[RMDB]
RNA sequence: GGGAACGACUCGAGUAGAGUCGAAAAGGAAAGCCGGGUGUUCGUCACCGGGCCCGACGUGGUGCGCAGCGUCACCGGCGAGGACGUCGACAUGGCCUCGCUCGGUGGGCCGGAGACCCACCACAAGGACUAGUGAGUGGUUCGCCACUCACUAGUCAAAAGAAACAACAACAACAAC
Reactivity to DMS in 0.01 (KOAc 150mM, MgCl2 10mM, bicine 150mM(pH8.5), 24C), signal-to-noise 2, nucleotides 027 to 126: g010g030a200a120a190g000c010c020g050g060g010u000g020u000u000c130g000u010c030a030c020c000g000g020g000c000c040c000g000a160c140g010u000g000g000u010g000c050g030c130a150g000c010g010u000c000a010c010c010g010g000c010g000a030g000g000a030c010g020u010c300g050a100c260a050u000g010g000c000c010u000c000g010c000u000c020g020g000u000g000g010g010c010c030g000g000a110g010a100c040c040c000a020c000c010a020c050a190a120g040
Reactivity to 2A3 in 0.01 (KOAc 150mM, MgCl2 10mM, bicine 150mM(pH8.5), 24C), signal-to-noise 2, nucleotides 027 to 126: g070g020a100a090a000g030c040c020g070g050g010u040g030u070u180c140g170u170c020a000c020c000g010g010g000c030c010c000g000a040c090g010u020g000g020u000g050c010g000c130a070g030c010g130u070c000a000c010c010g010g000c020g000a000g000g000a050c030g050u160c070g070a120c070a230u150g050g000c000c010u000c010g030c040u090c020g000g000u000g000g010g010c010c010g000g010a020g050a040c010c000c000a000c010c000a000c000a050a040g110